Structure probing data (DMS and 2A3) for a 177-nucleotide construct. High 2A3 reactivity points to a flexible backbone, as in loops and unpaired stretches. For 2A3, 2,228 sequencing reads were counted. DMS adducts were read by reverse transcription with MarathonRT. Values cover nucleotides 27 to 126.
RNA sequence: GGGAACGACUCGAGUAGAGUCGAAAACUGUGGUGAGACCCUAUCUAGUAUAGCAAUCCACCAAGCAGGUGAGUUCACACAAUUCAGGUUCUCAGAGAAAAUGCGCCCUGACUUGACAGGUAUGGUCAAAUCGUCACUCAUUCGUGAGUGACGAUUUAAAAGAAACAACAACAACAAC
Reactivity to DMS in 0.01 (KOAc 150mM, MgCl2 10mM, bicine 150mM(pH8.5), 24C), signal-to-noise 4, nucleotides 027 to 126: c060u010g010u030g000g000u010g010a100g000a090c200c300c050u010a030u000c020u030a120g000u050a060u000a050g020c100a140a060u010c030c000a030c010c030a070a110g000c110a090g030g010u000g000a120g030u000u020c030a080c070a230c100a080a050u010u000c100a070g030g000u000u000c010u000c050a100g000a120g000a070a060a040a090u010g000c130g000c300c000c010u010g020a040c030u000u000g010a130c060a020g000g000u010a030u020g000g000u010c060
Reactivity to 2A3 in 0.01 (KOAc 150mM, MgCl2 10mM, bicine 150mM(pH8.5), 24C), signal-to-noise 3, nucleotides 027 to 126: c030u050g010u050g040g020u040g020a080g030a000c010c030c000u000a010u000c020u040a070g080u170a040u000a050g020c010a000a040u010c000c000a000c000c000a030a020g060c030a000g010g040u020g020a050g050u010u030c040a010c020a010c000a130a090u040u070c040a010g040g000u060u010c020u020c000a020g050a000g060a120a070a010a010u130g030c030g020c020c010c000u040g060a090c040u080u070g050a030c030a040g080g020u050a050u120g060g000u020c000